[RMDB]
RNA sequence: GGGAACGACUCGAGUAGAGUCGAAAAGAUAUGGAGGACGGACGAAUGGCGACGACGUCGGAAACGACAUCAGCCACGUUUCCUCCUAAGUCAAAGGACCAAGAGAUCUUCGGAUCUCUUGGUCCAACUGAAAGAUUAACUUCGGUUAAUCUUUCAGAAAAGAAACAACAACAACAAC
Reactivity to DMS in 0.01 (KOAc 150mM, MgCl2 10mM, bicine 150mM(pH8.5), 24C), signal-to-noise 6, nucleotides 027 to 126: g000a020u000a300u000g000g020a020g030g010a020c300g000g000a010c030g000a130a130u000g030g020c000g000a040c300g000a020c060g030u000c000g010g000a030a030a100c000g000a000c000a000u000c020a190g020c000c000a020c000g010u000u000u000c000c000u000c010c000u000a010a080g000u000c020a050a100a090g010g010a010c010c000a000a010g000a010g010a000u000c000u000u030c230g020g000a010u000c000u000c000u000u000g000g000u000c000c000a000a030
Reactivity to 2A3 in 0.01 (KOAc 150mM, MgCl2 10mM, bicine 150mM(pH8.5), 24C), signal-to-noise 3, nucleotides 027 to 126: g030a010u090a040u130g010g000a020g040g000a020c220g140g070a010c010g150a300a300u090g000g000c040g010a180c130g000a010c020g020u000c020g000g050a050a060a010c010g000a000c010a030u030c020a010g000c010c010a010c020g000u000u020u010c010c000u040c000c000u020a190a020g070u020c040a070a040a260g020g000a020c010c000a000a000g000a010g000a000u000c010u120u220c300g000g020a000u000c000u020c010u010u020g000g000u000c000c000a010a000

Description: An RNA of 177 nucleotides, treated with DMS and 2A3 and read out base by base. For DMS the reverse transcriptase was MarathonRT. The reactions ran in a buffer of 150 mM KOAc, 10 mM MgCl2 and 150 mM bicine (pH 8.5), at 24 C. The 2A3 profile rests on 4,798 reads. The DMS profile rests on 3,976 reads.